[RMDB]
RNA sequence: GGGAACGACUCGAGUAGAGUCGAAAAGGAUCGACGAGGGCGUAAAGGGGGAGCUUUCGCUCGGCAUGGUUCCGCCGUUAUCGGGCCUUUGCAAUAGUUGCCAACGACAACUUUGCUCCGGUGGCUGCCGCAGGAUAACCUUCGGGUUAUCCUGCGGAAAAGAAACAACAACAACAAC
Reactivity to 2A3 in 0.01 (KOAc 150mM, MgCl2 10mM, bicine 150mM(pH8.5), 24C), signal-to-noise 2, nucleotides 027 to 126: g040g010a090u050c010g020a030c060g000a060g000g040g000c040g000u120a000a030a060g060g000g000g000g000a020g030c000u000u030u010c080g020c030u040c000g000g000c030a040u100g090g000u060u010c030c040g000c000c000g040u050u020a000u080c020g000g010g040c050c000u030u060u040g000c000a030a020u070a190g000u020u000g040c010c110a120a030c060g130a090c000a020a000c040u050u010u050g030c030u000c040c010g000g040u010g000g000c000u040g020
Reactivity to DMS in 0.01 (KOAc 150mM, MgCl2 10mM, bicine 150mM(pH8.5), 24C), signal-to-noise 1, nucleotides 027 to 126: g010g000a080u040c090g000a080c120g010a100g000g030g000c020g000u000a020a060a150g000g000g000g030g000a030g000c020u000u020u060c070g020c030u000c020g060g000c090a080u010g000g000u040u000c030c060g000c060c060g000u010u000a070u000c000g030g030g040c030c030u000u010u090g030c080a010a040u030a020g050u000u000g050c010c170a170a260c280g010a300c030a060a000c020u000u000u000g000c010u030c040c050g000g000u020g000g000c030u000g010